Description
An RNA of 207 nucleotides, treated with 2A3 and DMS and read out base by base. Reactivities are given for positions 27 through 156. Source: RMDB library OK3TST, as collected in RNAgym. For DMS, 3,629 sequencing reads were counted. DMS adducts were read by reverse transcription with MarathonRT.
[RMDB]
RNA sequence: GGGAACGACUCGAGUAGAGUCGAAAAGGCAUGUUCCAGCAACUGCAAAAAAGCCAGUAGGAAAUAAGGGCAAAAAGGGAGGCAGUGUUCAGAUCUUGCAGGCUAUUAGAGUAUUCCAGGUGAGAGAGGAUGGUAGGACAAUAGUGAGAAGGGAUUACGAUAGUCAGGAGUUCGCUCCUGACUAUCGAAAAGAAACAACAACAACAAC
Reactivity to 2A3 in 0.01 (KOAc 150mM, MgCl2 10mM, bicine 150mM(pH8.5), 24C), signal-to-noise 4, nucleotides 027 to 156: g050g020c040a030u090g040u040u040c020c000a000g010c030a050a080c030u050g030c040a020a030a030a010a060a070g040c030c020a040g030u050a020g040g100a020a050a050u180a070a100g020g010g000c050a050a060a010a020a000g040g010g000a010g020g020c040a020g020u010g020u070u060c020a010g000a070u030c020u050u100g020c040a030g010g010c030u050a060u110u130a040g030a010g040u060a070u130u040c020c010a010g000g040u040g020a040g010a010g000a000g030g010a020u030g000g040u040a030g000g010a000c020a050a100u030a060g070u040g060a050g000a030a040g030g000g000a010u020u110a030
Reactivity to DMS in 0.01 (KOAc 150mM, MgCl2 10mM, bicine 150mM(pH8.5), 24C), signal-to-noise 2, nucleotides 027 to 156: g050g060c020a060u000g020u000u010c030c080a160g000c030a090a060c060u000g020c040a010a040a050a100a080a100g020c020c010a110g010u000a080g030g000a080a080a120u000a100a030g030g040g030c040a040a050a050a070a070g000g020g010a100g010g020c050a050g020u020g030u000u000c030a110g000a110u010c030u000u000g000c050a060g010g040c030u020a050u000u000a120g010a100g050u010a090u000u000c020c010a100g020g060u020g000a150g000a150g000a040g020g010a040u000g030g000u000a070g010g000a050c060a050a060u010a060g000u000g010a090g040a080a130g010g010g030a090u000u010a100